[RMDB]
RNA sequence: GGGAACGACUCGAGUAGAGUCGAAAAAGACUUGCCCAGCCAGAAGUACGCCUCGGCGGCCACGGGCCACACCCUGAGCUCCGUUUUAAACUUGUUGAGUACUGUGGUCAGCACGGAGGAAAGGCGGCGUCCUCCCAUUAUUCGUAAUGGGAGGACGAAAAGAAACAACAACAACAAC
Reactivity to 2A3 in 0.01 (KOAc 150mM, MgCl2 10mM, bicine 150mM(pH8.5), 24C), signal-to-noise 2, nucleotides 027 to 126: a010g130a050c070u120u170g020c000c000c010a020g020c020c050a080g000a270a000g210u060a060c040g060c010c010u030c020g060g000c000g020g000c040c000a020c010g020g020g030c070c000a020c000a040c000c000c020u050g030a050g030c000u000c030c060g010u050u000u070u260a080a130a070c060u070u050g040u080u070g070a050g020u050a250c060u020g000u030g060g040u020c000a020g040c030a050c110g200g020a080g030g000a080a060a000g000g000c000g000g000
Reactivity to DMS in 0.01 (KOAc 150mM, MgCl2 10mM, bicine 150mM(pH8.5), 24C), signal-to-noise 1, nucleotides 027 to 126: a060g010a090c170u000u030g020c000c010c000a020g040c040c110a080g000a070a060g000u030a020c070g000c000c000u000c010g050g030c000g000g010c000c020a020c040g000g010g020c020c050a040c110a040c040c000c000u010g030a130g000c000u010c040c010g000u020u010u040u000a030a100a110c120u010u020g000u050u020g000a160g000u000a080c050u000g020u000g000g000u000c010a090g060c000a120c070g000g020a000g000g020a030a060a120g000g000c020g000g000
An RNA of 177 nucleotides, treated with 2A3 and DMS and read out base by base.
For DMS, 2,214 sequencing reads were counted.
The data come from the RNA Mapping Database (RMDB), library OK1LIB.